[RMDB]
RNA sequence: GGGAACGACUCGAGUAGAGUCGAAAAGCGUUGACCCGCUGUUAGGGCCAGAAAUGCGCUCUACCGGGGAAGUCAUGGGCGUGGGCCGCACCUUCGCUGAAGCGUUUGCCAAAGCGCAGCUGGGCAGUCGUUGGUUCAUGUUCGCAUGAACCAACGAAAAAGAAACAACAACAACAAC
Reactivity to DMS in 0.01 (KOAc 150mM, MgCl2 10mM, bicine 150mM(pH8.5), 24C), signal-to-noise 1, nucleotides 027 to 126: g010c070g000u010u000g010a160c000c050c000g020c160u010g000u000u000a010g000g000g000c010c020a010g000a020a020a110u000g000c220g030c000u000c000u000a020c070c030g000g000g010g000a050a030g000u000c040a090u010g000g000g000c050g020u010g000g010g000c040c080g000c020a080c130c030u000u000c100g020c020u000g010a120a090g010c010g000u000u000u000g000c080c100a040a220a050g000c010g000c100a020g010c070u000g000g010g030c090a110g000